RNA sequence: GGGAACGACUCGAGUAGAGUCGAAAAGCUCUAGGAGACUAGAGCGAUACGUUAGAGAGCUCGUGGCAUUACUAACGGAUAGCCAGGUACGAGGUUGCCAGAGGACAUAGCUAUAGCUAUGUCCAAAGAGCUAUCUAAGGUUCGCCUUAGAUAGCUCAAAAGAAACAACAACAACAAC
Reactivity to DMS in 0.01 (KOAc 150mM, MgCl2 10mM, bicine 150mM(pH8.5), 24C), signal-to-noise 4, nucleotides 027 to 126: g000c000u000c010u010a000g000g000a180g000a210c000u000a000g000a000g010c010g010a040u010a060c060g020u000u000a010g000a180g020a130g010c010u000c150g020u020g000g020c020a090u020u020a150c010u000a030a020c050g000g020a040u000a060g000c010c020a100g000g030u010a040c140g000a110g010g020u000u000g000c060c040a120g000a230g000g010a020c000a010u000a000g000c000u030a120u040a100g010c010u000a000u000g000u000c000c000a010a030a090
Reactivity to 2A3 in 0.01 (KOAc 150mM, MgCl2 10mM, bicine 150mM(pH8.5), 24C), signal-to-noise 3, nucleotides 027 to 126: g010c000u000c000u000a020g000g060a070g050a120c010u000a000g010a000g000c020g010a010u030a030c020g000u030u040a030g030a010g010a010g100c020u030c140g190u170g080g000c030a050u060u020a020c030u080a040a030c030g010g020a070u070a050g050c020c030a090g070g040u070a070c070g050a100g000g110u160u080g000c020c010a020g060a100g080g000a000c000a000u000a000g000c020u200a040u040a300g010c000u000a000u010g000u000c000c010a000a000a000